About this RNA
The record gives the reactivity of an RNA of 207 nucleotides to DMS and 2A3. For DMS the reverse transcriptase was MarathonRT.
[RMDB]
RNA sequence: GGGAACGACUCGAGUAGAGUCGAAAAGAUUCCUCGUUGUUGAGCGAGGUUUAAACAAAUCGACCACACAAACGUAGAGCCGACUACGGAUCUAUAAAUUAAGGCAUUAAGUGUGAUAAGGAGACAAAAAACGAUGUUGUGUUCGCACAACAUCGAAGCUUAUCAAUUGCUUCGGCAAUUGAUAAGCAAAAGAAACAACAACAACAAC
Reactivity to DMS in 0.01 (KOAc 150mM, MgCl2 10mM, bicine 150mM(pH8.5), 24C), signal-to-noise 1, nucleotides 027 to 156: g010a280u000u010c010c010u010c060g040u030u000g000u000u000g010a220g020c020g000a020g000g060u020u000u000a030a090a060c160a040a100a180u000c000g010a090c040c020a030c010a180c000a050a090a130c090g020u010a040g030a130g000c000c000g030a210c200u000a120c090g090g000a070u010c060u000a020u000a090a030a220u070u000a020a040g030g010c100a170u000u000a030a130g000u000g000u010g060a050u000a070a090g000g010a150g000a080c090a030a080a000a070a080a180c000g030a020u010g030u000u000g010u010g010u010u000c300g050c000a000c000a000a010c000a000u000c000g000a010a070
Reactivity to 2A3 in 0.01 (KOAc 150mM, MgCl2 10mM, bicine 150mM(pH8.5), 24C), signal-to-noise 4, nucleotides 027 to 156: g110a080u190u130c000c000u010c010g000u000u010g000u000u020g000a010g000c000g000a000g020g010u040u110u040a010a010a010c030a010a020a010u010c000g020a000c000c000a020c000a000c010a050a150a020c020g000u000a000g000a010g020c000c010g050a000c010u020a010c000g000g020a050u080c060u090a090u160a210a080a080u200u150a020a000g010g030c010a020u090u280a160a100g000u000g020u010g010a000u010a050a050g130g030a070g040a040c110a060a060a010a020a050a030c010g000a000u000g000u000u000g000u000g010u020u030c070g040c040a010c000a010a000c000a010u000c000g000a000a000
The 2A3 profile rests on 3,202 reads. The data come from the RNA Mapping Database (RMDB), library M2RFPK.